[RMDB]
RNA sequence: GGGAACGACUCGAGUAGAGUCGAAAAGAUAUGGAAUGAGCUUGGGAGCUGGUGUUCGGAAACGAACACCCAGCGAGGAUCAAGCUAUUCCUAAGUCAAAAGCUGCAAUCCUUCGGGAUUGCAGCAAGACUUUUACAUCGUUCGCGAUGUAAAAGUCAAAAGAAACAACAACAACAAC
Reactivity to DMS in 0.01 (KOAc 150mM, MgCl2 10mM, bicine 150mM(pH8.5), 24C), signal-to-noise 2, nucleotides 027 to 126: g000a040u000a100u000g000g000a010a020u000g020a120g010c000u000u000g010g000g000a070g030c000u000g000g050u000g000u000u000c000g000g020a030a090a070c030g010a010a010c000a000c300c180c030a000g030c020g020a130g030g000a160u010c000a030a000g000c010u000a000u000u010c000c000u020a010a100g000u000c020a170a030a150a150g000c000u000g000c000a020a010u000c010c000u000u030c260g030g020g010a000u000u000g010c000a000g040c020a020a020
Reactivity to 2A3 in 0.01 (KOAc 150mM, MgCl2 10mM, bicine 150mM(pH8.5), 24C), signal-to-noise 1, nucleotides 027 to 126: g000a000u020a000u060g000g010a060a030u060g050a150g000c010u000u020g050g010g060a210g000c010u020g050g030u000g010u010u010c000g000g000a000a040a000c010g000a000a000c020a000c020c060c020a000g000c020g100a300g070g030a040u030c000a000a000g030c030u010a000u000u040c000c000u000a010a000g010u030c040a110a040a040a240g000c010u000g000c000a000a000u010c010c000u050u130c290g170g020g000a000u000u000g010c000a020g030c020a010a000